Structure probing data (2A3 and DMS) for a 177-nucleotide construct. Source: RMDB library TTRDES, as collected in RNAgym. The DMS profile rests on 923 reads. For DMS the reverse transcriptase was MarathonRT. For 2A3, 2,345 sequencing reads were counted. Conditions: 150 mM KOAc, 10 mM MgCl2 and 150 mM bicine (pH 8.5), 24 C.
RNA sequence: GGGAACGACUCGAGUAGAGUCGAAAAGAUAUGGAUGGGAAUGACAUGUAGUUCAUCGGAAACGAUGAAUACUACAACAGCAUUUCAUCCUAAGUCAAACAUUUAGUAGGUUCGCCUACUAAAUGAAGUCUACCUUCAACUUCGGUUGAAGGUAGACAAAAGAAACAACAACAACAAC
Reactivity to 2A3 in 0.01 (KOAc 150mM, MgCl2 10mM, bicine 150mM(pH8.5), 24C), signal-to-noise 1, nucleotides 027 to 126: g000a010u050a010u090g010g000a000u010g080g040g280a020a020u020g040a150c100a130u300g000u010a030g000u000u010c000a020u000c020g000g070a030a030a030c000g000a010u010g020a060a020u080a110c000u010a000c010a300a080c020a060g010c000a000u000u000u030c000a000u000c000c000u000a040a010g030u020c030a060a100a140c010a020u000u000u000a020g010u010a010g000g110u030u090c300g160c100c010u000a010c010u000a010a000a000u000g020a090a000
Reactivity to DMS in 0.01 (KOAc 150mM, MgCl2 10mM, bicine 150mM(pH8.5), 24C), signal-to-noise 1, nucleotides 027 to 126: g000a030u000a300u000g000g020a000u000g020g090g000a020a000u000g000a090c120a300u010g000u010a000g030u000u000c000a000u000c000g000g010a110a030a160c000g030a010u000g000a000a130u010a070c000u020a020c030a050a090c230a240g000c010a000u000u000u000c000a000u000c000c010u000a040a060g000u000c010a210a230a300c020a000u000u000u000a000g030u010a010g000g040u000u000c270g000c000c000u000a000c010u000a000a050a000u000g000a110a120